Conditions: 150 mM KOAc, 10 mM MgCl2 and 150 mM bicine (pH 8.5), 24 C. Structure probing data (2A3 and DMS) for a 177-nucleotide construct. For DMS, 1,119 sequencing reads were counted.
RNA sequence: GGGAACGACUCGAGUAGAGUCGAAAAAUAUGAUAGGUACUACAUGCUCUAGUAGGAUCCACAUGUCAGCGGAUCCAUGGAUCCAGGUACUCUCAUGACGGUACCACUAGCUAGACAUGGCUAGCACUACGCUCCUCUAUUUCGAUAGAGGAGCGUAAAAAGAAACAACAACAACAAC
Reactivity to 2A3 in 0.01 (KOAc 150mM, MgCl2 10mM, bicine 150mM(pH8.5), 24C), signal-to-noise 2, nucleotides 027 to 126: a000u170a040u130g070a090u080a080g070g000u030a000c000u000a010c020a060u030g050c010u030c020u020a020g030u030a060g070g010a000u040c020c020a040c040a040u190g030u210c040a030g210c160g300g020a060u000c010c000a010u020g060g000a000u010c000c030a020g090g010u000a000c050u050c020u050c100a070u170g090a030c100g020g000u010a020c000c000a020c070u040a020g000c000u040a020g010a090c000a030u060g030g000c050u030a050g020c000a010c090
Reactivity to DMS in 0.01 (KOAc 150mM, MgCl2 10mM, bicine 150mM(pH8.5), 24C), signal-to-noise 2, nucleotides 027 to 126: a070u000a060u000g010a100u000a100g010g000u000a050c030u040a050c020a030u000g030c160u000c020u000a010g000u000a120g000g020a050u000c000c010a080c070a230u010g010u000c060a110g020c110g020g010a020u000c260c030a080u000g000g000a030u000c020c050a180g010g010u000a040c010u010c130u000c200a100u020g000a080c250g000g010u000a050c010c020a240c160u000a060g000c020u000a040g000a090c140a060u000g000g010c040u000a010g000c090a080c150
Values cover nucleotides 27 to 126. It was measured as part of the RMDB library OK2TRN.